Structure probing data (2A3 and DMS) for a 177-nucleotide construct.
Reactivities are given for positions 27 through 126.
For DMS, 2,915 sequencing reads were counted.
Conditions: 150 mM KOAc, 10 mM MgCl2 and 150 mM bicine (pH 8.5), 24 C.
The 2A3 profile rests on 1,675 reads.
2A3 is a SHAPE reagent: it acylates the 2'-hydroxyl of flexible nucleotides of all four kinds.
For 2A3 the reverse transcriptase was SuperScript II with manganese.
[RMDB]
RNA sequence: GGGAACGACUCGAGUAGAGUCGAAAAAAAUUAUGGUCGCCGGCACGUAUGUGCACACCGAGAAUGACACUCUAUCGCCGUCAACCGUGUCGGUAGUCUUGCACAUCAGGAAUCCGUCUGCGUUGAACUUUACAAUGCGAUUCGUCGCAUUGUAAAGAAAAGAAACAACAACAACAAC
Reactivity to 2A3 in 0.01 (KOAc 150mM, MgCl2 10mM, bicine 150mM(pH8.5), 24C), signal-to-noise 1, nucleotides 027 to 126: a000a000a000u180u070a090u050g040g000u020c020g010c000c000g000g020c000a000c030g090u150a040u210g100u110g070c040a020c030a010c020c040g030a020g100a120a100u140g050a040c000a030c090u130c030u080a070u150c040g000c060c010g010u020c030a040a060c000c050g010u000g010u060c040g000g020u030a070g010u000c000u020u070g000c050a050c010a070u080c010a020g020g020a060a060u020c040c010g050u030c020u030g000c030g090u050u100g000a010a010
Reactivity to DMS in 0.01 (KOAc 150mM, MgCl2 10mM, bicine 150mM(pH8.5), 24C), signal-to-noise 3, nucleotides 027 to 126: a040a050a090u010u010a080u020g000g000u000c020g020c060c050g010g000c060a060c030g020u000a030u020g000u000g020c010a110c150a080c110c050g030a060g010a090a090u010g010a110c120a090c080u000c070u010a100u000c100g020c060c040g010u000c130a050a060c130c050g000u000g020u010c020g020g010u010a040g020u010c040u000u010g000c050a050c080a050u020c060a030g010g000a070a040u000c040c030g000u010c030u010g000c040g000u000u000g000a070a140